[RMDB]
RNA sequence: GGGAACGACUCGAGUAGAGUCGAAAAGAAAACACUCGAAGUGUAAAGAGUGGACACCGCGAAUGCGAACAUGAGAAAAUAGUCGGAAAACGACUAGAUACACAUCAUGGAGUGUAUAAAAAGAAAAGGGUUAAGUUAAGUUCGCUUAACUUAACCCAAAAGAAACAACAACAACAAC
Reactivity to 2A3 in 0.01 (KOAc 150mM, MgCl2 10mM, bicine 150mM(pH8.5), 24C), signal-to-noise 4, nucleotides 027 to 126: g070a000a070a000a000c020a000c000u010c010g110a190a080g090u070g050u300a100a110a010g060a000g000u020g020g010a030c020a030c050c000g030c050g100a090a110u210g020c020g000a040a010c010a010u080g030a020g140a020a030a000a060u030a000g010u010c020g090g050a100a060a060a090c010g010a000c000u010a010g000a000u150a040c080a010c020a070u050c030a010u050g050g050a060g020u020g090u040a050u070a100a060a010a020a040g140a010a140a000a020
Reactivity to DMS in 0.01 (KOAc 150mM, MgCl2 10mM, bicine 150mM(pH8.5), 24C), signal-to-noise 3, nucleotides 027 to 126: g020a070a110a110a120c000a020c000u000c000g000a130a160g000u020g000u010a100a140a160g010a120g040u030g000g000a060c080a130c020c030g000c070g010a050a040u020g000c000g050a150a130c030a020u000g000a040g000a110a130a040a090u000a020g010u000c000g030g000a130a040a140a230c000g000a000c000u000a000g020a130u040a010c080a000c120a120u000c020a070u030g000g000a110g000u000g000u000a060u020a020a040a040a150a090g010a040a070a110a180

Conditions: 150 mM KOAc, 10 mM MgCl2 and 150 mM bicine (pH 8.5), 24 C. This 177-nucleotide RNA was probed chemically with 2A3 and DMS. For DMS, 4,588 sequencing reads were counted. The 2A3 profile rests on 4,082 reads. Source: RMDB library OK1LIB, as collected in RNAgym.